Structure probing data (DMS and 2A3) for a 177-nucleotide construct. The 2A3 profile rests on 21,352 reads. It was measured as part of the RMDB library M2PK50. The RNA was probed in 150 mM KOAc, 10 mM MgCl2 and 150 mM bicine (pH 8.5) at 24 C. Values cover nucleotides 27 to 126.
RNA sequence: GGGAACGACUCGAGUAGAGUCGAAAACCUCUAGUAUUCGUACUAGAGGCACAUGCCGCCCCAACGGCUUCCUGACGGGGCGGAUUCACUUUAAUUGGAGCAAAGCCGCUGUGUUCGCACAGCGGAAGGUAUAGGUUAUCUUCGGAUAACCUAUACCAAAAGAAACAACAACAACAAC
Reactivity to DMS in 0.01 (KOAc 150mM, MgCl2 10mM, bicine 150mM(pH8.5), 24C), signal-to-noise 5, nucleotides 027 to 126: c000c000u000c000u000a000g020u000a010u000u030c160g020u000a000c000u000a010g010a010g000g000c060a040c130a090u000g010c000c000g000c010c000c010c000a030a220c140g010g000c020u000u010c000c000u010g020a180c300g000g010g020g010c010g000g000a000u000u000c090a070c170u000u000u000a070a060u000u010g010g000a040g010c020a130a150a130g000c000c010g000c000u000g020u000g000u000u010c200g020c000a010c000a010g010c000g000g010a010a010
Reactivity to 2A3 in 0.01 (KOAc 150mM, MgCl2 10mM, bicine 150mM(pH8.5), 24C), signal-to-noise 7, nucleotides 027 to 126: c000c000u010c000u000a000g000u000a020u040u060c240g030u040a010c000u000a000g000a000g000g020c030a020c000a120u140g030c000c000g000c000c000c000c000a020a010c090g140g000c000u120u130c010c000u010g010a010c030g000g000g010g000c020g020g000a010u100u080c040a020c060u120u170u240a100a070u110u170g020g000a010g000c010a060a040a010g060c010c000g000c010u010g000u010g040u080u110c230g030c090a000c000a000g010c010g000g000a000a000